[RMDB]
RNA sequence: GGGAACGACUCGAGUAGAGUCGAAAACGAGCAGUACCUCGACGGCCUGGGACCCCGGACCCGCCACCUGCUGUUCUCGGUGAGCAAGUCGCUGGUGGCGGCUGUGGUCGGCGCGCUGCACGGGGCCGUGAAAGAAGGAAUUCGUUCCUUCUUUCACAAAAGAAACAACAACAACAAC
Reactivity to 2A3 in 0.01 (KOAc 150mM, MgCl2 10mM, bicine 150mM(pH8.5), 24C), signal-to-noise 9, nucleotides 027 to 126: c020g010a030g080c070a040g090u140a090c000c010u010c020g040a040c020g020g010c010c010u100g060g100g010a040c010c010c000c000g000g050a120c060c010c000g000c000c000a000c000c000u030g020c020u040g050u100u010c070u040c110g240g150u300g020a020g010c040a070a070g120u170c060g030c070u030g010g000u000g000g000c000g000g000c000u000g000u010g010g000u010c010g020g080c020g000c020g010c010u020g000c050a050c030g010g000g010g000c020c050
Reactivity to DMS in 0.01 (KOAc 150mM, MgCl2 10mM, bicine 150mM(pH8.5), 24C), signal-to-noise 9, nucleotides 027 to 126: c050g010a120g020c160a090g010u010a110c060c020u000c030g020a300c020g010g000c010c020u000g010g000g000a060c030c020c030c020g020g000a110c220c010c010g000c000c000a010c010c000u000g010c020u010g020u000u000c010u000c150g010g020u000g000a050g020c070a060a090g010u010c210g010c030u000g010g020u000g000g010c000g000g000c020u000g010u000g010g010u000c020g010g010c060g010c230g000c030u000g010c070a130c030g010g000g000g020c120c080